Structure probing data (2A3) for a 207-nucleotide construct. The RNA was probed in 150 mM KOAc, 10 mM MgCl2 and 150 mM bicine (pH 8.5) at 24 C. For 2A3 the reverse transcriptase was SuperScript II with manganese.
[RMDB]
RNA sequence: GGGAACGACUCGAGUAGAGUCGAAAAUUGCCCAGGCUGGAGUGCAGUGGCAUAAUCUCGGCUCACUGCAACCUCUGCCUUCCGGGUUCAAGCAAUUCUUCUGCCUCAGCCUCCCGAGUAGCUGGGAUUACAGGCACACACCACCACACUCGGCUAACGAGUGAUAAUACUUCGGUAUUAUCACUCGAAAAGAAACAACAACAACAAC
Reactivity to 2A3 in 0.01 (KOAc 150mM, MgCl2 10mM, bicine 150mM(pH8.5), 24C), signal-to-noise 3, nucleotides 027 to 156: u110u060g040c000c020c000a000g040g000c070u210g060g000a020g030u140g020c010a010g010u000g000g030c030a070u110a270a230u220c110u070c150g120g000c120u140c100a010c000u010g000c010a010a050c000c010u010c020u010g000c000c000u110u020c080c060g040g050g020u080u120c060a090a020g000c020a080a100u110u000c010u130u020c010u030g000c010c010u030c000a010g010c010c020u090c030c030c020g000a000g000u030a000g000c030u030g000g020g010a010u040u140a060c060a040g050g030c030a020c020a010c000a020c100c020a050c020c010a050c000a010c080u010c000g010g010c040u040a080a020